Structure probing data (2A3 and DMS) for a 207-nucleotide construct. DMS adducts were read by reverse transcription with MarathonRT. The DMS profile rests on 1,548 reads. The reactions ran in a buffer of 150 mM KOAc, 10 mM MgCl2 and 150 mM bicine (pH 8.5), at 24 C.
[RMDB]
RNA sequence: GGGAACGACUCGAGUAGAGUCGAAAAGAAAGGAAGAAAUUAGCUCGCCAGUUAGCGAGGUCUGUCCCCACACGACAGAUAAUCGGGUGCAACUCCCGCCCCUUUUCCGAGGGUCAUCGGAACCAAAAAAACUCAGGCAACUUCGGUUGCCUGAGAAUCUAGAAUCUUAGUUCGCUAAGAUUCUAGAAAAAGAAACAACAACAACAAC
Reactivity to 2A3 in 0.01 (KOAc 150mM, MgCl2 10mM, bicine 150mM(pH8.5), 24C), signal-to-noise 3, nucleotides 027 to 156: g040a010a040a020g090g030a050a060g050a100a180a060u180u090a070g030c000u000c010g020c030c040a130g120u130u170a010g010c010g000a010g010g000u000c010u010g010u010c010c010c050c000a040c000a000c050g000a000c000a000g010a010u050a050a060u110c010g010g000g000u010g000c000a010a000c020u020c020c000c010g010c010c000c000c000u110u140u030u000c000c000g000a000g010g000g030u050c020a000u000c000g010g020a020a020c040c020a040a080a060a060a020a020a030c010u000c000a000g000g000c000a010a010c010u040u060c090g100g000u000u010g000c000c000u000g000a000g000a000a000
Reactivity to DMS in 0.01 (KOAc 150mM, MgCl2 10mM, bicine 150mM(pH8.5), 24C), signal-to-noise 1, nucleotides 027 to 156: g000a040a050a090g000g000a090a050g000a060a080a230u010u000a140g020c000u000c020g010c000c000a300g030u000u010a050g060c000g000a020g020g040u030c000u000g000u000c020c040c030c200a080c190a130c160g000a020c020a020g040a090u000a050a180u000c050g040g050g000u000g000c000a040a300c040u000c010c010c000g020c030c000c000c040u000u010u000u010c010c010g000a050g020g000g000u030c040a070u010c000g000g020a050a050c180c030a000a000a190a000a040a080a130c000u010c010a030g030g000c000a000a030c010u000u000c270g030g030u000u000g010c010c000u000g000a010g040a000a010